[RMDB]
RNA sequence: GGGAACGACUCGAGUAGAGUCGAAAAGGAGGAGCUUUGCGGCGUCCAGUUUCGAGACGAGGCUCGCGAUGUUACCGAUGACCAGGCCGUACAUGGCCGCACCGAGGAGCUCUAUCACGAUGGUGUAACAAAACACCAUCUUCGGAUGGUGUUUUGUAAAAGAAACAACAACAACAAC
Reactivity to DMS in 0.01 (KOAc 150mM, MgCl2 10mM, bicine 150mM(pH8.5), 24C), signal-to-noise 4, nucleotides 027 to 126: g000g010a090g010g020a080g010c020u000u010u010g010c060g000g010c030g020u000c030c060a210g000u000u000u000c100g010a210g010a080c060g020a150g040g010c060u000c060g040c120g020a090u000g010u010u010a150c110c030g010a070u000g010a150c060c080a180g010g000c000c000g000u000a080c190a090u010g000g020c010c010g040c070a050c040c020g000a140g000g000a040g000c020u000c030u010a110u010c050a080c070g000a080u000g000g020u010g000u010a130
Reactivity to 2A3 in 0.01 (KOAc 150mM, MgCl2 10mM, bicine 150mM(pH8.5), 24C), signal-to-noise 2, nucleotides 027 to 126: g110g030a030g000g000a040g010c020u070u050u050g040c050g040g000c020g000u030c000c020a010g020u000u040u220c220g060a190g000a040c020g020a050g060g010c020u000c010g000c020g000a070u140g040u110u100a100c030c010g030a130u080g070a080c020c040a040g000g000c010c010g080u160a200c050a210u180g000g000c040c000g000c000a020c000c000g010a050g040g000a000g000c000u000c030u050a220u100c040a040c050g030a080u180g030g050u030g010u070a050